[RMDB]
RNA sequence: GGGAACGACUCGAGUAGAGUCGAAAAGACGGACUCUUCUUGGAAUGUGAGGAGUCCGAGCCUUCUCACAUUCCAUUUGCCAUGAGGAGGCAGUAGACUUCAUGGCAAAUAUAGAUGAGGUCUACAGGCAGUCGUGACUAUUCGUAGUCAUGACUGCAAAAGAAACAACAACAACAAC
Reactivity to 2A3 in 0.01 (KOAc 150mM, MgCl2 10mM, bicine 150mM(pH8.5), 24C), signal-to-noise 6, nucleotides 027 to 126: g070a020c080g020g020a020c010u010c010u050u010c010u040u080g010g010a020a000u020g010u010g010a010g000g000a000g010u010c070c010g000a020g010c000c000u010u000c010u000c000a010c000a010u010u000c000c000a010u020u010u020g000c000c000a010u010g010a000g040g010a020g060g030c070a020g060u180a030g050a050c000u000u000c010a010u010g000g000c000a000a010a000u120a010u050a010g030a020u020g030a020g050g090u000c010u030a040c040a030g170
Reactivity to DMS in 0.01 (KOAc 150mM, MgCl2 10mM, bicine 150mM(pH8.5), 24C), signal-to-noise 9, nucleotides 027 to 126: g010a120c120g010g000a250c050u000c010u000u000c030u000u000g010g000a030a010u000g010u000g000a020g010g000a010g010u010c070c130g000a040g000c300c010u000u000c000u000c000a010c010a020u000u000c010c000a110u000u000u000g000c000c000a010u000g000a010g000g000a080g010g020c080a160g010u010a180g010a060c000u000u000c000a000u000g000g000c010a000a010a020u000a080u000a030g000a020u010g000a120g010g010u000c010u010a110c180a130g000